[RMDB]
RNA sequence: GGGAACGACUCGAGUAGAGUCGAAAAGAAAGAAAGAAAGAAAUCUGACAGAAUGACGGAUUCGAUCGUUGUGGUCGGCGGGCCACCACGUCAUUCCUUCGCACUGUCUCCGGGCAGACCCCCAUAAAAAAGCGGAUCUACUUCGGUAGAUCCGCAAGAGAAAUGUAAACUUCGGUUUACAUUUCUCAAAAGAAACAACAACAACAAC
Reactivity to 2A3 in 0.01 (KOAc 150mM, MgCl2 10mM, bicine 150mM(pH8.5), 24C), signal-to-noise 3, nucleotides 027 to 156: g030a000a120a010g060a040a070a020g050a040a110a010g090a050a130a040u050c070u130g000a010c010a010g180a170a200u110g010a010c030g010g000a000u010u130c120g040a100u280c080g010u010u010g000u000g020g020u000c020g050g140c090g070g030g010c000c000a010c010c000a000c010g000u000c000a000u020u000c000c000u010u010c000g010c030a030c030u000g010u000c000u000c050c060g020g010g000c010a030g030a080c010c010c000c020c040a030u220a020a120a020a030a020a010g010c000g000g000a010u000c000u000a000c020u020u030c090g020g000u000a000g000a000u000c000c000g000c000a000a000

This 207-nucleotide RNA was probed chemically with 2A3. Source: RMDB library M2RFPK, as collected in RNAgym. Values cover nucleotides 27 to 156. For 2A3, 1,737 sequencing reads were counted.